Record summary:
Chemical mapping of a 177-nucleotide RNA with 2A3 and DMS. For 2A3, 539 sequencing reads were counted.
RNA sequence: GGGAACGACUCGAGUAGAGUCGAAAACGCGUUGGAGUUCUAUCAGCAUCGUUUGUGAUCUGUUCGCGAUAGGCCUCGCCGUUCGCGACACUGACAUUGCGCACACGACACGCCGCGGAUCGUCGCAAACCGUCUCGUAGUUCGCUACGAGACGGUUAAAAGAAACAACAACAACAAC
Reactivity to 2A3 in 0.01 (KOAc 150mM, MgCl2 10mM, bicine 150mM(pH8.5), 24C), signal-to-noise 2, nucleotides 027 to 126: c000g030c000g000u040u050g020g080a060g060u070u000c080u060a210u210c030a080g100c020a030u110c020g180u110u030u130g190u090g060a120u080c010u050g030u030u060c020g000c010g000a000u080a180g020g090c030c040u030c120g040c030c000g080u060u010c000g000c000g050a000c070a000c080u070g000a000c010a160u090u110g010c030g030c020a000c000a000c020g080a000c000a000c090g030c000c000g020c000g050g010a030u050c030g020u010c000g000c040a000
Reactivity to DMS in 0.01 (KOAc 150mM, MgCl2 10mM, bicine 150mM(pH8.5), 24C), signal-to-noise 1, nucleotides 027 to 126: c050g000c300g060u030u000g050g010a120g000u000u000c000u000a050u000c060a040g020c020a110u020c140g020u000u000u050g000u090g050a040u000c100u060g000u020u000c050g020c000g000a110u000a160g030g000c010c180u000c300g060c000c000g040u000u000c000g070c010g000a100c050a000c070u000g000a050c150a020u050u000g000c040g000c050a060c020a050c050g000a120c020a090c150g040c090c000g000c080g030g040a080u040c020g040u070c000g020c130a080
Record summary: The RNA was probed in 150 mM KOAc, 10 mM MgCl2 and 150 mM bicine (pH 8.5) at 24 C.